An RNA of 177 nucleotides, treated with 2A3 and DMS and read out base by base. Conditions: 150 mM KOAc, 10 mM MgCl2 and 150 mM bicine (pH 8.5), 24 C.
[RMDB]
RNA sequence: GGGAACGACUCGAGUAGAGUCGAAAAUUGGCAGUCAACUUCAGCUUGUGCCUGAGCAGACGGGGUUGUGGUGGCCCGCCAGCGGGGGAUGCCAGGCCACCUCCCCCAGCGGCACGCAGCCCCUCUCCGAUGUAGGGAACUUCGGUUCCCUACAUCGAAAAGAAACAACAACAACAAC
Reactivity to 2A3 in 0.01 (KOAc 150mM, MgCl2 10mM, bicine 150mM(pH8.5), 24C), signal-to-noise 4, nucleotides 027 to 126: u060u030g040g020c040a040g050u110c040a050a030c070u140u050c090a030g060c050u070u090g040u070g050c010c020u050g030a050g010c050a030g030a110c090g000g000g000g010u090u010g010u070g300g300u060g070g110c030c030c010g000c030c010a080g080c100g010g000g000g000g010a000u070g050c080c060a030g060g000c020c010a020c010c010u010c000c000c000c000c000a000g010c000g020g000c010a000c020g020c000a000g010c000c010c010c000u010c000u000c000
Reactivity to DMS in 0.01 (KOAc 150mM, MgCl2 10mM, bicine 150mM(pH8.5), 24C), signal-to-noise 2, nucleotides 027 to 126: u050u050g000g000c050a060g010u020c040a070a060c110u000u000c090a100g010c070u000u000g000u000g020c130c000u020g000a150g030c160a090g020a020c180g000g020g000g030u000u010g000u010g020g050u000g010g000c150c000c030g000c000c270a100g010c170g020g010g020g010g000a040u000g000c020c120a070g010g000c040c040a160c080c050u000c020c000c010c000c000a080g000c010g000g000c000a030c000g000c010a030g000c020c000c000c010u000c010u000c020